[RMDB]
RNA sequence: GGGAACGACUCGAGUAGAGUCGAAAACAGCAAAAAGGAACCGAUUCCCACCAAGUUCGGAAAGAGAUACCGGGCGAGGCGCUGAAGAAAGAGUCUCGCUUCAGACACCCCAAGGACUCGACUGAAGAAUGCACGCCAUCGUUCGCGAUGGCGUGAACAACCUCCAUAAGUUCGCUUAUGGAGGUUGAAAAGAAACAACAACAACAAC
Reactivity to 2A3 in 0.01 (KOAc 150mM, MgCl2 10mM, bicine 150mM(pH8.5), 24C), signal-to-noise 1, nucleotides 027 to 156: c040a010g140c010a000a080a080a090a090g120g000a040a060c020c040g030a090u060u030c000c020c010a010c000c030a100a030g060u030u010c000g050g100a180a070a010g060a010g010a040u060a140c010c010g020g000g000c060g010a040g030g010c050g020c040u130g000a060a030g080a130a300a010g010a090g010u000c040u010c050g000c000u040u030c010a020g040a060c050a070c010c020c010c000a060a040g050g020a040c020u010c050g060a060c060u110g010a010a010g040a030a020u080g040c000a000c000g010c010c000a020u040c030g060u080u060c210g000c010g110a000u000g050g000c000g000u010g010a000a000